The record gives the reactivity of an RNA of 207 nucleotides to 2A3 and DMS.
The 2A3 profile rests on 3,523 reads.
The reactions ran in a buffer of 150 mM KOAc, 10 mM MgCl2 and 150 mM bicine (pH 8.5), at 24 C.
RNA sequence: GGGAACGACUCGAGUAGAGUCGAAAAAGUGUAUGAAGUACGUAGAGUGUCGGCAAGCUCUAUAUAUGGACACUUACGAAGGGUUUGGGUUGUUUUGUAUCUCAAGCCGACUUUGAGUAUUUGAGGAAAAAGACUUACGCCUUCGGGCGUAAGUCAACUAGGAACAAUUGUUCGCAAUUGUUCCUAGAAAAGAAACAACAACAACAAC
Reactivity to 2A3 in 0.01 (KOAc 150mM, MgCl2 10mM, bicine 150mM(pH8.5), 24C), signal-to-noise 4, nucleotides 027 to 156: a000g100u100g020u080a220u130g040a050a030g010u030a010c020g010u000a010g000a000g040u030g030u040c040g030g040c070a130a120g010c010u010c000u010a020u000a000u010a000u040g060g010a010c010a000c000u050u070a040c070g110a100a070g090g040g030u070u090u060g020g010g000u010u010g020u000u070u040u050g040u060a080u030c010u000c020a000a000g000c000c010g010a030c030u100u140u140g020a020g020u070a110u080u170u120g060a050g020g050a030a100a020a020a000g010a000c000u000u000a000c000g000c000c000u020u040c160g090g010g000c010g000u000a000a000g000u000c000a000a000
Reactivity to DMS in 0.01 (KOAc 150mM, MgCl2 10mM, bicine 150mM(pH8.5), 24C), signal-to-noise 2, nucleotides 027 to 156: a040g050u000g010u000a180u010g000a200a290g010u000a020c030g020u000a040g030a040g010u000g000u000c050g010g000c070a180a300g000c010u010c000u000a010u000a030u000a060u020g030g000a060c030a010c010u000u000a110c090g000a080a090g020g000g000u000u000u000g010g010g000u000u010g000u000u000u000u000g000u010a100u010c020u000c030a040a050g010c000c010g030a040c070u000u010u000g010a160g030u010a060u010u000u000g000a090g000g000a040a070a140a180a130g020a040c000u010u000a010c000g050c000c000u010u020c300g050g010g000c010g010u000a000a010g000u010c010a000a050